[RMDB]
RNA sequence: GGGAACGACUCGAGUAGAGUCGAAAAAAAGACGCGGUUGCCGAUCGGUAUGGAUGCCACCGUGACGGCUCAAUCACACAAGUGCCAACGAUAACGAGGCGCUCGCUAUUGCUGCGUAACUCACGGCUAGAUACAGCCAGGUUCGCCUGGCUGUAAAAGACCAUCCUAAGUUCGCUUAGGAUGGUCUAAAAGAAACAACAACAACAAC
Reactivity to DMS in 0.01 (KOAc 150mM, MgCl2 10mM, bicine 150mM(pH8.5), 24C), signal-to-noise 1, nucleotides 027 to 156: a110a060a100g020a040c040g020c000g020g060u020u000g020c010c060g020a120u010c030g000g000u000a140u020g000g010a170u000g000c000c070a080c020c000g030u010g000a200c120g030g000c040u010c030a080a090u000c070a070c000a080c030a140a040g050u000g030c020c010a080a140c060g000a080u010a080a070c140g000a300g010g020c080g040c000u000c030g060c010u000a030u030u010g030c010u000g000c040g030u000a120a100c070u000c030a070c000g020g010c060u000a100g020a290u000a070c010a000g030c000c000a020g010g000u000u000c300g030c000c020u010g000g010c020u000g020u000a060a060a100
Reactivity to 2A3 in 0.01 (KOAc 150mM, MgCl2 10mM, bicine 150mM(pH8.5), 24C), signal-to-noise 3, nucleotides 027 to 156: a020a000a010g080a010c040g020c050g030g010u070u060g010c000c030g060a070u060c040g030g050u140a100u160g040g030a030u100g060c000c000a020c000c020g020u010g040a080c070g040g000c030u030c020a060a060u100c030a020c000a010c010a090a070g050u020g050c000c000a090a060c090g070a130u120a160a080c070g010a020g000g000c000g010c000u070c050g040c030u140a150u240u300g000c030u020g000c000g010u040a070a060c020u010c030a010c000g000g020c020u070a020g010a070u060a060c000a000g000c000c000a000g000g040u030u020c050g080c040c000u000g000g000c000u000g000u000a000a000a000